RNA sequence: GGGAACGACUCGAGUAGAGUCGAAAACGAGAUACGGUCCCGUGACGGUGGUUUCGAGGUCCGCGGCGUCAAGAAAUUCGUGUCGCUGUCUCCGAUCGCCGACCACAUCAUGGUGGUGGCCCGCAGCUGCCUAGGACAGUUUCGACUGUCCUAGGCAAAAAGAAACAACAACAACAAC
Reactivity to DMS in 0.01 (KOAc 150mM, MgCl2 10mM, bicine 150mM(pH8.5), 24C), signal-to-noise 2, nucleotides 027 to 126: c080g010a040g000a120u000a100c080g000g000u000c030c010c020g030u000g000a140c070g020g020u010g040g010u000u010u000c110g000a050g040g000u000c010c070g000c020g010g020c030g010u000c250a060a100g020a090a070a180u000u000c090g000u000g020u000c010g000c040u000g010u000c010u000c070c040g010a010u000c050g000c020c010g000a080c000c020a000c020a070u010c160a110u060g010g020u000g030g030u000g000g020c020c020c020g010c110a050g000c230
Reactivity to 2A3 in 0.01 (KOAc 150mM, MgCl2 10mM, bicine 150mM(pH8.5), 24C), signal-to-noise 1, nucleotides 027 to 126: c030g010a010g020a030u150a140c000g010g070u050c000c010c030g020u000g020a020c050g080g040u020g010g070u050u140u110c040g010a120g000g020u020c010c020g010c060g020g040c020g060u130c030a000a050g120a050a150a010u290u090c070g030u020g010u090c020g050c020u000g040u050c020u000c000c000g020a030u030c010g000c020c010g000a030c030c000a000c030a110u200c080a020u090g110g040u070g000g040u060g050g050c080c000c080g060c010a030g000c000
Record summary: The data come from the RNA Mapping Database (RMDB), library OK2TST. The record gives the reactivity of an RNA of 177 nucleotides to DMS and 2A3. For 2A3, 853 sequencing reads were counted. The reactions ran in a buffer of 150 mM KOAc, 10 mM MgCl2 and 150 mM bicine (pH 8.5), at 24 C. 2A3 adducts were read by reverse transcription with SuperScript II with manganese. The DMS profile rests on 1,342 reads. Reactivities are given for positions 27 through 126.